An RNA of 207 nucleotides, treated with 2A3 and read out base by base. The RNA was probed in 150 mM KOAc, 10 mM MgCl2 and 150 mM bicine (pH 8.5) at 24 C.
[RMDB]
RNA sequence: GGGAACGACUCGAGUAGAGUCGAAAAAUCAAGCCUCAUUUGCCACCGCUUUGAAAUCCAAAGGAUCUGGUCUGCUUGUUGCAGGUCGAAUUCAUACUGCAAGUGACGCUGGUCUUUUGGGAACAAUUCGGACCUCGGCACAAGAUAAACAAGCUGACCUCAGGCCUGAGUUCGCUCAGGCCUGAGGAAAAGAAACAACAACAACAAC
Reactivity to 2A3 in 0.01 (KOAc 150mM, MgCl2 10mM, bicine 150mM(pH8.5), 24C), signal-to-noise 1, nucleotides 027 to 156: a000u070c070a080a000g060c010c000u180c080a130u070u100u100g010c010c030a040c000c000g000c000u020u030u030g050a120a100a070u120c020c000a000a000a000g000g030a010u000c000u100g050g010u050c020u090g050c040u110u040g140u150u070g080c060a030g000g080u110c110g030a000a110u270u190c080a120u270a130c010u000g030c000a020a000g030u030g080a000c140g050c300u100g000g000u030c020u010u000u010u020g030g000g020a000a000c000a000a080u040u080c000g020g040a140c010c090u040c110g000g000c000a000c000a010a000g010a120u190a190a280a020c090a070a030g000c040u020g060a010

It was measured as part of the RMDB library OK3TST.